Chemical mapping of a 207-nucleotide RNA with 2A3.
RNA sequence: GGGAACGACUCGAGUAGAGUCGAAAAGUCUCCUAGAGAGCUUGGCCGUCGGGCCUUACACCCCGACUUGAUGAGUUUCUCUAGGAGAGUCCCUUUCCCAGCCAGAGGUGGCUGGUCAAACAAUACCAAAACUCUUGCUAGUUCGCUAGCAAGAGAAGUUACCGAGUGAGUUCGCUCACUCGGUAACAAAAGAAACAACAACAACAAC
Reactivity to 2A3 in 0.01 (KOAc 150mM, MgCl2 10mM, bicine 150mM(pH8.5), 24C), signal-to-noise 1, nucleotides 027 to 156: g010u020c000u000c000c010u000a010g000a000g000a000g010c000u040u030g020g060c020c000g000u000c020g010g020g000c030c030u050u070a050c050a020c040c000c000c000g000a020c000u100u070g110a100u120g000a050g020u150u300u000c000u000c000u000a000g000g000a000g000a000g000u040c000c000c000u010u060u030c010c000c000a000g000c010c000a010g000a010g010g000u000g000g000c020u090g000g000u190c010a010a000a020c070a100a000u030a020c000c000a010a030a120a200c000u000c000u000u000g000c000u000a000g020u040u010c210g010c130u000a000g000c000a000a000g000a000g000a000a000
Record summary
It was measured as part of the RMDB library M2RFPK. The reactions ran in a buffer of 150 mM KOAc, 10 mM MgCl2 and 150 mM bicine (pH 8.5), at 24 C.